The record gives the reactivity of an RNA of 177 nucleotides to DMS and 2A3. For DMS the reverse transcriptase was MarathonRT.
[RMDB]
RNA sequence: GGGAACGACUCGAGUAGAGUCGAAAACACGUCACAGUGUUGCCGCAAGUGCGGUAAUUUAUGCUGGAGUUGAUGCUAACAAUUUAAGUUAUAGCAAUCUGAAUGUGGCUUUAGCUCAUCCAGAUAAUAUACCGUAUCGAUUCGUCGAUACGGUAUAAAAAGAAACAACAACAACAAC
Reactivity to DMS in 0.01 (KOAc 150mM, MgCl2 10mM, bicine 150mM(pH8.5), 24C), signal-to-noise 5, nucleotides 027 to 126: c040a060c080g000u010c210a110c120a110g000u000g020u010u010g020c010c010g030c010a300a160g030u010g030c010g010g010u000a010a050u010u000u010a060u010g010c020u000g000g000a140g010u010u010g010a060u010g020c010u000a030a110c050a060a070u010u010u000a070a090g010u010u000a060u000a080g020c070a070a060u000c010u000g000a010a010u000g020u000g030g010c060u000u010u000a090g020c000u000c020a030u000c020c010a010g000a020u020a040a140
Reactivity to 2A3 in 0.01 (KOAc 150mM, MgCl2 10mM, bicine 150mM(pH8.5), 24C), signal-to-noise 3, nucleotides 027 to 126: c020a000c020g080u060c010a010c020a170g020u010g010u060u040g010c010c010g010c030a300a220g180u190g230c000g000g000u010a020a010u080u120u100a240u300g070c000u010g030g030a130g050u120u120g070a020u060g010c000u010a070a010c030a090a100u060u140u300a140a050g020u080u050a090u120a140g030c030a060a020u060c060u050g090a090a060u110g040u060g130g000c000u080u110u070a020g000c030u020c030a020u030c000c010a000g020a000u070a080a060
The reactions ran in a buffer of 150 mM KOAc, 10 mM MgCl2 and 150 mM bicine (pH 8.5), at 24 C.
Source: RMDB library OK2TST, as collected in RNAgym.
For 2A3 the reverse transcriptase was SuperScript II with manganese.